[RMDB]
RNA sequence: GGGAACGACUCGAGUAGAGUCGAAAAGACCAGUCAGAUCGUCCGUUUGACGAGAAACGGUUACGCCAUCGAUCAUAUCCACAAACUGUACGCGACCUGCCACUUCAGUGAUGAUUGGCAUGGUAUAUCGGUAUUUUAUCUUCGGAUAAAAUACCGAAAAAGAAACAACAACAACAAC
Reactivity to DMS in 0.01 (KOAc 150mM, MgCl2 10mM, bicine 150mM(pH8.5), 24C), signal-to-noise 6, nucleotides 027 to 126: g000a140c040c020a130g030u010c070a090g010a140u000c050g010u000c020c250g010u010u000u010g000a100c090g010a100g010a080a080a030c060g010g010u010u000a070c110g010c040c050a060u010c030g000a070u010c030a090u000a100u000c030c030a040c110a050a050a090c070u010g010u000a050c140g020c110g000a050c010c010u000g010c020c000a010c190u000u000c010a000g010u020g000a160u000g010a020u000u000g000g010c000a020u000g020g000u000a060u010a070
Reactivity to 2A3 in 0.01 (KOAc 150mM, MgCl2 10mM, bicine 150mM(pH8.5), 24C), signal-to-noise 5, nucleotides 027 to 126: g020a030c010c020a020g080u080c040a030g010a100u040c010g050u000c060c040g060u040u110u180g120a090c080g040a050g150a070a030a000c010g020g010u070u100a030c050g030c040c010a060u060c010g040a020u040c030a020u050a040u140c040c010a070c060a080a110a030c050u070g040u150a030c050g020c020g110a050c000c010u010g000c000c000a070c050u040u030c000a030g030u040g150a120u020g000a000u020u030g010g000c020a040u160g000g030u030a050u020a010